[RMDB]
RNA sequence: GGGAACGACUCGAGUAGAGUCGAAAAUCAGGGAUUUGGUUUUAUUAGCUCUUUAGCCUACCUGUUAGCUCUUAGCCACUUCUUAGAACCCAAUUCCCUCAGCAGUUGAAGACCUCCUUGUUUUGCACUAAAUACGCAUUUGGUCCAGGUGAGUAUACUAUAUCUACGAAUUCGUUCGUAGAUAUAGAAAAGAAACAACAACAACAAC
Reactivity to 2A3 in 0.01 (KOAc 150mM, MgCl2 10mM, bicine 150mM(pH8.5), 24C), signal-to-noise 5, nucleotides 027 to 156: u100c020a020g040g010g020a030u060u060u070g060g030u040u050u060u060a120u060u140a040g020c020u040c030u160u090u120a030g030c030c020u060a070c030c030u060g050u070u060a020g000c010u020c010u050u030a020g000c030c010a080c050u070u010c010u050u090a060g030a060a040c020c020c000a030a050u070u080c000c000c000u030c020a040g000c010a020g010u080u100g070a080a010g030a060c020c000u030c000c000u030u050g060u080u150u070u070g030c020a000c060u110a070a080a070u140a060c080g010c060a020u050u040u090g020g000u020c030c000a000g020g040u090g030a060g040u130a090u100a070
Reactivity to DMS in 0.01 (KOAc 150mM, MgCl2 10mM, bicine 150mM(pH8.5), 24C), signal-to-noise 3, nucleotides 027 to 156: u000c050a100g010g020g010a080u010u000u010g020g020u000u000u010u000a060u010u000a080g010c020u000c070u000u000u000a070g020c040c020u010a090c090c040u010g020u010u000a080g010c030u000c030u000u000a100g010c010c030a050c070u000u000c060u000u000a130g020a070a140c050c010c030a060a150u000u000c010c010c000u000c050a090g020c030a100g020u010u010g000a080a110g010a090c040c010u000c040c030u000u000g010u020u000u000u000g010c050a160c100u000a040a050a120u000a040c010g000c030a060u000u000u000g010g010u000c050c040a100g020g020u000g010a020g020u000a080u000a250